[RMDB]
RNA sequence: GGGAACGACUCGAGUAGAGUCGAAAAGUAGCUCAGGUCCGGUGCCAGGUUGUCUUUGAUGUAGCCCAGCGCAUCCAGUAAUGAGGUAGUUGCGUCAUAAGGCACUUCAUAGAAUGCGCUAUGCGGAACGAGGUAUGAGUUUCGACUCAUACCUCGUAAAAGAAACAACAACAACAAC
Reactivity to 2A3 in 0.01 (KOAc 150mM, MgCl2 10mM, bicine 150mM(pH8.5), 24C), signal-to-noise 1, nucleotides 027 to 126: g040u030a000g010c010u030c060a000g010g060u020c000c000g040g040u000g030c000c020a010g030g060u040u050g070u040c060u060u050u140g030a050u070g070u110a050g000c000c000c010a000g010c000g000c000a000u000c070c010a060g060u070a070a090u080g040a020g050g040u110a130g070u180u050g060c030g090u060c050a080u060a220a020g070g000c020a000c000u020u000c020a010u040a080g060a090a020u020g000c000g000c060u040a080u080g060c080g040g000a020
Reactivity to DMS in 0.01 (KOAc 150mM, MgCl2 10mM, bicine 150mM(pH8.5), 24C), signal-to-noise 3, nucleotides 027 to 126: g010u000a080g020c020u010c020a070g010g000u010c020c000g000g000u000g020c050c040a080g010g010u000u010g000u000c040u000u000u000g020a080u000g010u010a120g020c020c040c050a080g010c020g020c000a040u010c010c040a110g000u020a130a050u010g010a030g020g020u010a100g010u000u000g000c160g030u010c180a090u010a090a240g000g020c030a040c020u000u000c030a030u000a100g020a050a050u000g010c010g030c040u000a080u010g020c050g010g010a070